The record gives the reactivity of an RNA of 207 nucleotides to 2A3 and DMS. Source: RMDB library M2RFPK, as collected in RNAgym. DMS adducts were read by reverse transcription with MarathonRT. The 2A3 profile rests on 1,689 reads. The RNA was probed in 150 mM KOAc, 10 mM MgCl2 and 150 mM bicine (pH 8.5) at 24 C. For DMS, 2,496 sequencing reads were counted.

RNA sequence: GGGAACGACUCGAGUAGAGUCGAAAACAACACGUCCUCGUCGUACAGAGUGGUAACAUGUGUCACCACAUAUCCAAGCUUGGGUACACGUGCUUGACCCAACCCCUUGGGCGGAUGGUGGCACAUGAAAAGAAGUAACACUUCGGUGUUACUUCAAUCCUCUUCCAAAGUUCGCUUUGGAAGAGGAAAAAGAAACAACAACAACAAC
Reactivity to 2A3 in 0.01 (KOAc 150mM, MgCl2 10mM, bicine 150mM(pH8.5), 24C), signal-to-noise 3, nucleotides 027 to 156: c060a000a020c010a010c070g090u070c020c020u080c040g190u060c030g010u100a070c150a110g060a030g050u120g040g080u110a060a000c000a000u000g000u000g000u000c000a000c020c000a020c010a050u120a010u140c000c000a010a010g010c030u030u000g010g020g030u130a200c020a010c070g170u110g110c130u080u020g040a030c000c000c000a000a030c040c000c000c010u000u010g020g010g010c050g090g080a240u020g000g000u000g000g040c000a000c000a000u000g000a000a000a000a000g010a000a000g000u000a000a000c000a000c000u010u060c140g090g000u000g010u000u000a000c000u010u000c000a000a000
Reactivity to DMS in 0.01 (KOAc 150mM, MgCl2 10mM, bicine 150mM(pH8.5), 24C), signal-to-noise 1, nucleotides 027 to 156: c090a040a000c060a050c010g000u000c010c030u000c060g080u000c010g040u020a090c060a090g000a140g030u010g000g050u010a100a090c000a010u000g010u000g020u000c000a010c020c000a030c010a130u020a020u020c010c000a030a140g070c110u000u000g010g000g000u000a090c100a040c140g030u000g000c070u010u090g020a170c000c000c020a030a070c000c100c060c030u000u020g000g020g070c060g070g010a150u020g010g000u000g000g000c020a020c000a000u000g000a010a010a060a210g000a030a000g000u000a030a020c020a000c000u000u000c300g060g030u000g000u000u000a000c000u020u010c000a020a040